[RMDB]
RNA sequence: GGGAACGACUCGAGUAGAGUCGAAAAGGUUUUUGUAAGAAUGCUAGCAGGGUACACACAAGAAGAGUAAUUGCACUGGAUUAGAAAUACUGGGGUGGGCCUCUUUUUAAUGUCCAGUGUCCUUUGUAAUGUGUUAUCUAUUCGUAGAUAACACAUUAAAAGAAACAACAACAACAAC
Reactivity to 2A3 in 0.01 (KOAc 150mM, MgCl2 10mM, bicine 150mM(pH8.5), 24C), signal-to-noise 8, nucleotides 027 to 126: g040g010u040u030u030u100u100g080u050a090a060g070a120a050u140g050c050u040a020g010c030a010g030g000g040u100a030c060a000c010a010c030a090a030g090a060a020g060a050g060u120a150a120u140u180g000c000a000c010u000g010g000a010u050u050a080g070a080a070a040u140a080c090u080g010g000g050g050u070g020g060g040c030c010u060c000u100u110u030u040u090a110a090u160g010u000c000c010a000g010u000g010u050c000c000u030u040u040g150u030
Reactivity to DMS in 0.01 (KOAc 150mM, MgCl2 10mM, bicine 150mM(pH8.5), 24C), signal-to-noise 6, nucleotides 027 to 126: g010g010u010u000u000u010u010g010u000a100a080g000a090a070u010g010c040u010a060g010c050a050g000g010g010u010a050c110a080c100a070c130a080a070g000a040a070g010a110g010u020a050a110u020u020g000c020a020c010u000g010g000a030u010u010a160g000a070a050a070u010a040c110u010g010g000g000g020u010g000g010g010c070c020u000c010u000u000u010u010u030a020a080u020g000u000c010c010a020g010u000g000u010c180c020u000u010u010g010u000
The record gives the reactivity of an RNA of 177 nucleotides to 2A3 and DMS. The reactions ran in a buffer of 150 mM KOAc, 10 mM MgCl2 and 150 mM bicine (pH 8.5), at 24 C. DMS (dimethyl sulfate) methylates the pairing face of unpaired adenines and cytosines. Source: RMDB libraries RFM100 and RFMREP, as collected in RNAgym. For 2A3 the reverse transcriptase was SuperScript II with manganese.